Structure probing data (DMS and 2A3) for a 177-nucleotide construct. Conditions: 150 mM KOAc, 10 mM MgCl2 and 150 mM bicine (pH 8.5), 24 C. 2A3 adducts were read by reverse transcription with SuperScript II with manganese. Values cover nucleotides 27 to 126.
[RMDB]
RNA sequence: GGGAACGACUCGAGUAGAGUCGAAAAGGAAGCAAUAUGUGCUGCGAUGGUAGAAUCAUGGGGUUAUGAUGAACUUCUUCAUCAUAUCAGAAAAUUCUAUGCAUGGGUAUUGGACCAAGCCCCAUACAUCCGAGUAGAGCUUCGGCUCUACUCGGAUAAAAGAAACAACAACAACAAC
Reactivity to DMS in 0.01 (KOAc 150mM, MgCl2 10mM, bicine 150mM(pH8.5), 24C), signal-to-noise 1, nucleotides 027 to 126: g010g010a130a140g000c030a120a120u000a040u010g000u000g000c000u010g010c100g050a080u010g000g000u000a000g000a010a060u000c080a220u000g020g020g000g000u020u010a010u000g010a000u000g000a000a090c300u000u110c180u010u000c000a000u000c000a000u000a030u000c000a020g010a090a120a150a040u000u000c000u000a000u000g010c020a000u000g000g000g040u000a020u000u060g000g010a120c060c090a000a040g030c100c000c010c080a110u010a060c260
Reactivity to 2A3 in 0.01 (KOAc 150mM, MgCl2 10mM, bicine 150mM(pH8.5), 24C), signal-to-noise 2, nucleotides 027 to 126: g100g000a100a110g040c160a010a060u150a020u260g130u150g010c010u010g080c000g020a020u140g100g070u110a000g000a030a030u150c120a050u140g000g160g000g000u080u000a000u000g020a000u000g010a030a000c180u160u070c060u070u000c090a010u040c000a000u000a000u050c040a020g130a000a200a040a000u020u000c000u000a020u100g110c000a020u040g010g040g000u060a020u180u160g070g050a000c000c010a090a060g040c030c000c000c000a000u030a020c000
DMS adducts were read by reverse transcription with MarathonRT. Source: RMDB library OK1LIB, as collected in RNAgym.